This 207-nucleotide RNA was probed chemically with DMS and 2A3. The reactions ran in a buffer of 150 mM KOAc, 10 mM MgCl2 and 150 mM bicine (pH 8.5), at 24 C. The data come from the RNA Mapping Database (RMDB), library OK3TST.
[RMDB]
RNA sequence: GGGAACGACUCGAGUAGAGUCGAAAAGUAUUGUGCUAAGCCCUUGGGAUAAAAGGACGAAGUUGUUCCUGCCUUAAAGGACCUUGGAUGUGUAUGAUGUCAGUUGAUCCUUAAAAGAACUAUGAGGAGUGGAGUUAGCAUUCUGGAACCAAUUUAACUAGUACUAAAAUUUCGAUUUUAGUACUAGAAAAGAAACAACAACAACAAC
Reactivity to DMS in 0.01 (KOAc 150mM, MgCl2 10mM, bicine 150mM(pH8.5), 24C), signal-to-noise 4, nucleotides 027 to 156: g010u000a060u000u000g020u010g020c030u000a100a160g000c010c010c020u000u000g030g030g020a180u000a060a070a050a040g000g030a050c030g010a100a160g030u000u000g010u000u000c010c010u000g010c050c030u000u000a050a110a100g020g010a080c030c030u000u000g020g030a070u000g020u000g020u000a100u010g010a080u000g010u000c020a070g020u000u000g010a090u000c030c010u000u000a070a060a120a140g010a080a100c070u010a120u000g010a110g010g010a090g030u000g010g010a110g030u000u010a070g020c010a070u000u000c040u000g010g020a070a060c040c040a040a170u000u000u000a060a190
Reactivity to 2A3 in 0.01 (KOAc 150mM, MgCl2 10mM, bicine 150mM(pH8.5), 24C), signal-to-noise 4, nucleotides 027 to 156: g070u070a070u180u140g030u040g030c030u060a090a080g030c010c010c000u040u090g050g010g000a070u120a100a220a050a060g020g000a020c040g050a090a040g030u070u030g020u080u010c000c020u020g020c010c000u050u080a070a070a030g030g010a080c000c010u030u050g030g010a080u030g030u020g020u080a070u110g100a010u040g050u030c020a030g000u050u050g020a040u050c010c000u020u050a030a130a020a000g070a030a020c090u060a080u160g030a010g060g020a050g010u060g020g010a070g040u050u070a010g000c010a020u110u030c020u070g020g030a020a020c040c020a010a030u130u190u160a050a030